The data come from the RNA Mapping Database (RMDB), library M2RFPK.
Structure probing data (DMS and 2A3) for a 207-nucleotide construct.
For DMS, 7,006 sequencing reads were counted.
For 2A3 the reverse transcriptase was SuperScript II with manganese.
Conditions: 150 mM KOAc, 10 mM MgCl2 and 150 mM bicine (pH 8.5), 24 C.
As a SHAPE reagent, 2A3 marks flexible, mostly unpaired nucleotides at the ribose 2'-OH.
DMS adducts were read by reverse transcription with MarathonRT.

RNA sequence: GGGAACGACUCGAGUAGAGUCGAAAAUCGAAAUCAUCGGGAGUGAUCCAGAUGACGGUCCUGCCAUGAGACCGCAACGAGAGCAUGUCGCAUCGAAUGGACUCGGGGGGUCGGCAGCUUGCCCCACUAAGGCAGACGUUGUUCGCAACGUCUGCAACAUUAGUAUCAAGUUCGCUUGAUACUAAUGAAAAGAAACAACAACAACAAC
Reactivity to DMS in 0.01 (KOAc 150mM, MgCl2 10mM, bicine 150mM(pH8.5), 24C), signal-to-noise 3, nucleotides 027 to 156: u020c040g020a110a130a060u000c010a020u000c020g000g050g010a090g040u010g000a280u000c020c000a040g000a020u000g000a050c000g010g010u000c050c020u000g000c040c060a170u010g000a190g010a040c010c060g020c030a080a090c040g010a100g010a130g030c010a070u000g010u000c010g010c100a140u010c070g010a110a300u000g000g000a120c020u000c070g030g010g030g000g020g060u000c040g010g010c020a060g000c070u000u010g000c040c020c010c020a060c120u020a050a080g000g020c010a030g000a040c010g000u000u000g010u000u000c190g020c000a040a020c020g020u000c020u000g030c000a010a040
Reactivity to 2A3 in 0.01 (KOAc 150mM, MgCl2 10mM, bicine 150mM(pH8.5), 24C), signal-to-noise 7, nucleotides 027 to 156: u060c010g030a030a010a050u020c000a000u010c020g020g010g000a030g030u140g050a120u000c010c010a020g010a010u010g010a010c010g000g000u020c010c010u020g070c010c010a140u190g070a040g000a120c020c020g020c090a050a080c040g020a010g000a020g070c040a060u130g060u210c040g010c090a090u110c100g080a050a040u050g040g060a060c020u020c070g020g000g000g010g000g000u010c000g010g000c010a010g020c030u090u140g000c000c010c000c010a050c060u110a070a050g130g000c000a000g000a000c000g000u000u010g020u030u040c100g020c100a000a000c000g000u000c000u000g000c000a000a000